Source: RMDB library OK3TST, as collected in RNAgym. This 207-nucleotide RNA was probed chemically with 2A3 and DMS. 2A3 adducts were read by reverse transcription with SuperScript II with manganese. For DMS the reverse transcriptase was MarathonRT. Values cover nucleotides 27 to 156.
[RMDB]
RNA sequence: GGGAACGACUCGAGUAGAGUCGAAAACAAGCUGACAAGACUAUGGUAUAGUAGUCUUGUCGGUUAAAUGAGGAGAUUGUUAUGGAAUUGGUAAAGGUAGUUUUUAUGGGGUGGUUUAAGAAUGAAAGCAUGUUUACUAAAGAAAUCACAAUGAUGACCAUAAUCAUGUCUUCGGACAUGAUUAUGGAAAAGAAACAACAACAACAAC
Reactivity to 2A3 in 0.01 (KOAc 150mM, MgCl2 10mM, bicine 150mM(pH8.5), 24C), signal-to-noise 3, nucleotides 027 to 156: c040a030a000g000c000u000g010a000c000a000a010g000a000c000u010a010u020g060g030u220a110u180a270g010u000a010g000u000c000u000u000g000u000c000g000g000u000u030a000a040a030u130g010a050g000g000a060g010a040u030u050g050u070u050a030u110g030g040a070a070u040u040g020g000u090a030a050a040g050g020u030a030g020u060u010u040u130u080a060u120g030g020g040g020u040g000g000u070u110u040a030a020g030a040a040u130g030a080a040a000g030c030a010u040g010u060u090u050a070c060u070a070a070a040g050a020a040a030u140c050a020c060a090a080u160g030a040u130g040a030
Reactivity to DMS in 0.01 (KOAc 150mM, MgCl2 10mM, bicine 150mM(pH8.5), 24C), signal-to-noise 2, nucleotides 027 to 156: c070a100a110g020c000u000g000a030c000a040a020g010a030c020u010a000u000g020g030u000a150u000a170g050u000a020g000u000c000u000u030g010u000c010g020g050u010u000a000a100a100u030g000a060g050g000a090g030a050u000u000g010u000u000a070u010g030g010a090a110u000u000g020g030u010a040a060a070g000g010u000a090g010u000u000u000u010u010a060u030g010g000g000g040u000g020g020u000u000u000a060a080g010a070a100u000g010a090a070a160g000c050a100u010g000u000u000u000a200c060u010a040a040a110g010a070a070a080u010c020a020c070a070a110u000g010a090u040g000a160